An RNA of 177 nucleotides, treated with DMS and read out base by base. It was measured as part of the RMDB library OK2TST. Values cover nucleotides 27 to 126. DMS adducts were read by reverse transcription with MarathonRT.

RNA sequence: GGGAACGACUCGAGUAGAGUCGAAAACAGCUCUGGGUUAAUACAGCCUUGCCCCCCGACUGGGUUGUACUGGAUCCCAGAGGAAAUAGGUGGGUGUCUUCAGGACAAGGCUGGGAACAAGUGUAUGAUGACCCCUGUUAUUCGUAACAGGGGUCAUAAAAGAAACAACAACAACAAC
Reactivity to DMS in 0.01 (KOAc 150mM, MgCl2 10mM, bicine 150mM(pH8.5), 24C), signal-to-noise 2, nucleotides 027 to 126: c150a150g020c010u000c000u000g010g030g010u000u000a070a130u000a060c000a010g010c000c000u000u000g000c020c000c030c110c060c050g020a300c030u010g000g010g010u000u000g010u010a040c110u000g020g020a100u000c000c000c000a010g050a100g020g020a020a050a140u000a070g030g030u010g000g010g020u000g020u000c070u000u000c150a110g010g020a050c050a050a040g000g010c050u010g000g010g000a070a130c110a110a100g000u000g000u000a080u000g000
For DMS, 1,149 sequencing reads were counted. The reactions ran in a buffer of 150 mM KOAc, 10 mM MgCl2 and 150 mM bicine (pH 8.5), at 24 C.